[RMDB]
RNA sequence: GGGAACGACUCGAGUAGAGUCGAAAAGCCGAUGAAUUGCCGAGAAGCCUGGCUCGAAAUCGUCUACGCAUCGACGACGGUCCUGCCAUGAGACCGUAACGAGGACAUGUCGCCUCGAAUGGCGUCGUAUAACAUGAGUGGUUCGCCACUCAUGUAAUCAUCAGUUAGUCUUCGGACUAACUGAUGAAAAAGAAACAACAACAACAAC
Reactivity to 2A3 in 0.01 (KOAc 150mM, MgCl2 10mM, bicine 150mM(pH8.5), 24C), signal-to-noise 5, nucleotides 027 to 156: g030c030c010g020a040u100g040a080a230u210u110g010c010c020g040a030g010a140a010g040c030c090u080g020g010c010u040c080g040a090a080a080u000c000g010u000c030u080a070c090g050c090a090u070c090g020a010c000g000a000c010g020g000u010c010c030u050g020c010c000a030u050g010a010g000a090c000c010g000u040a010a000c010g000a010g000g010a020c050a120u230g080u190c100g010c020c000u010c000g000a010a010u020g010g000c010g030u070c050g020u060a120u030a280a010c000a000u000g000a000g000u000g070g000u070u080c150g000c030c000a000c000u010c000a000u000g000u000a000a010
Reactivity to DMS in 0.01 (KOAc 150mM, MgCl2 10mM, bicine 150mM(pH8.5), 24C), signal-to-noise 2, nucleotides 027 to 156: g020c030c000g020a070u020g020a080a130u000u000g000c000c000g010a190g030a120a130g000c030c090u000g020g000c030u060c040g010a050a090a090u000c020g020u010c010u000a300c090g020c100a100u000c050g020a020c010g020a070c040g030g050u000c000c000u000g000c040c210a090u020g000a030g040a060c000c010g030u010a020a030c030g020a070g000g020a090c050a110u000g000u000c050g000c000c020u000c020g030a050a080u000g000g000c000g010u010c050g000u010a100u000a150a070c000a010u010g020a000g050u000g020g010u010u010c300g030c030c010a020c010u010c000a010u010g010u000a040a150
An RNA of 207 nucleotides, treated with 2A3 and DMS and read out base by base. For DMS, 4,082 sequencing reads were counted. 2A3 adducts were read by reverse transcription with SuperScript II with manganese. For 2A3, 3,948 sequencing reads were counted. For DMS the reverse transcriptase was MarathonRT. 2A3 is a SHAPE reagent: it acylates the 2'-hydroxyl of flexible nucleotides of all four kinds. The data come from the RNA Mapping Database (RMDB), library M2RFPK. Reactivities are given for positions 27 through 156. Reactivities are rounded to 0.1 and cut off at 0 and 3. Conditions: 150 mM KOAc, 10 mM MgCl2 and 150 mM bicine (pH 8.5), 24 C.